[RMDB]
RNA sequence: GGGAACGACUCGAGUAGAGUCGAAAAUCCCAAUUGCACGCGCUGCAGCCGCAGCCGACUGUCUUGGGCCGGAUCAGGGAAAUCAUCCAUUCGGCAGCCCUGUUCAGCGGAGUCGUCUACGCAGUCAACUCACUAAAUCGUUCGCGAUUUAGUGAGUAAAAGAAACAACAACAACAAC
Reactivity to 2A3 in 0.01 (KOAc 150mM, MgCl2 10mM, bicine 150mM(pH8.5), 24C), signal-to-noise 2, nucleotides 027 to 126: u030c000c010c000a010a030u110u100g050c050a020c110g090c020g000c030u020g000c020a020g110c060c080g020c010a030g030c030c020g090a120c010u050g030u020c030u030u070g010g030g000c020c010g040g000a040u060c110a150g010g000g110a100a170a130u130c040a060u050c010c030a040u100u040c010g010g000c050a040g000c000c010c000u030g040u080u040c010a040g000c030g040g030a040g030u050c000g010u000c040u050a060c080g000c030a030g020u020c030a000
Reactivity to DMS in 0.01 (KOAc 150mM, MgCl2 10mM, bicine 150mM(pH8.5), 24C), signal-to-noise 3, nucleotides 027 to 126: u010c000c000c000a100a110u000u010g020c160a120c110g030c170g020c060u020g030c020a110g000c120c090g010c050a060g020c020c030g000a090c050u000g010u000c040u000u000g020g050g000c000c030g000g020a050u010c150a090g010g000g030a070a110a130u000c130a150u000c020c020a160u010u000c030g010g000c110a110g000c030c030c000u000g000u000u000c040a100g020c030g000g000a070g010u000c030g000u000c030u000a100c150g010c050a100g010u000c090a160